Chemical mapping of a 177-nucleotide RNA with DMS.
RNA sequence: GGGAACGACUCGAGUAGAGUCGAAAAUGUUUAUUGGAUGCCAAGCACCACGCUACAUCCUAGCCAUAGGAGUGUAAUCUGAAAAAAUUCUCUGCUCUUAAAAAGUUUACCAUGGUGGAAAUAGAUACCUAUAUAGGACCUUCGGGUCCUAUAUAGGAAAAGAAACAACAACAACAAC
Reactivity to DMS in 0.01 (KOAc 150mM, MgCl2 10mM, bicine 150mM(pH8.5), 24C), signal-to-noise 2, nucleotides 027 to 126: u000g000u000u000u000a140u000u000g010g000a060u000g000c090c140a090a100g010c060a170c040c130a070c120g030c040u020a090c010a050u000c010c000u000a160g010c070c090a160u000a030g000g000a040g020u010g020u010a060a090u010c050u010g000a010a010a170a080a060a120u010u000c020u000c030u000g010c000u010c010u000u030a020a020a060a110a100g000u000u000u000a060c100c060a060u000g030g020u010g000g000a080a090a090u010a090g000a170u010a080

Source: RMDB library OK2TRN, as collected in RNAgym. The RNA was probed in 150 mM KOAc, 10 mM MgCl2 and 150 mM bicine (pH 8.5) at 24 C. Reactivities are given for positions 27 through 126.